[RMDB]
RNA sequence: GGGAACGACUCGAGUAGAGUCGAAAACUAAAUGUUCGCAUUUAGGAAGAACCUUUGUGUGGCUGGGCAUAUGGGAGUACAGGUCCCAUUGGGACCUUGACAUCGAUCAUAUGGCGGAAAGCCACACUCUGGUGGAGGCGUCAGCUUCGGCUGACAACUUGUCAUACACCUUCGGGUGUAUGACAAGAAAAGAAACAACAACAACAAC
Reactivity to 2A3 in 0.01 (KOAc 150mM, MgCl2 10mM, bicine 150mM(pH8.5), 24C), signal-to-noise 4, nucleotides 027 to 156: c010u010a000a020a020u020g010u080u150c300g020c110a010u000u000u020a030g010g040a070a080g090a060a040c000c010u020u020u000g000u000g010u000g000g000c000u020g040g110g070c000a010u010a000u010g040g020g000a030g020u020a090c030a030g030g000u020c030c000c040a190u120u240g010g010g000a000c010c000u000u070g020a030c020a180u190c020g110a030u060c000a000u020a030u030g100g220c030g100g100a230a070a000g000c000c000a000c000a000c000u000c000u000g000g000u040g040g070a080g080g100c150g000u000c000a000g010c010u070u120c270g140g000c010u000g000a000c000a010a030
Reactivity to DMS in 0.01 (KOAc 150mM, MgCl2 10mM, bicine 150mM(pH8.5), 24C), signal-to-noise 2, nucleotides 027 to 156: c010u000a010a000a010u000g020u000u000c300g050c020a010u000u000u000a020g020g000a080a110g010a140a050c010c020u020u000u000g010u000g020u000g000g040c000u000g100g010g000c010a040u000a010u010g010g000g000a300g040u000a140c070a040g020g000u000c000c000c020a300u000u000g040g010g010a040c000c000u000u020g030a040c050a120u000c050g020a250u000c000a020u010a010u000g020g000c030g000g020a070a110a110g010c000c000a010c020a000c030u000c030u000g020g030u000g000g020a040g000g000c030g040u010c010a010g000c000u000u020c300g030g050c000u000g000a030c010a020a070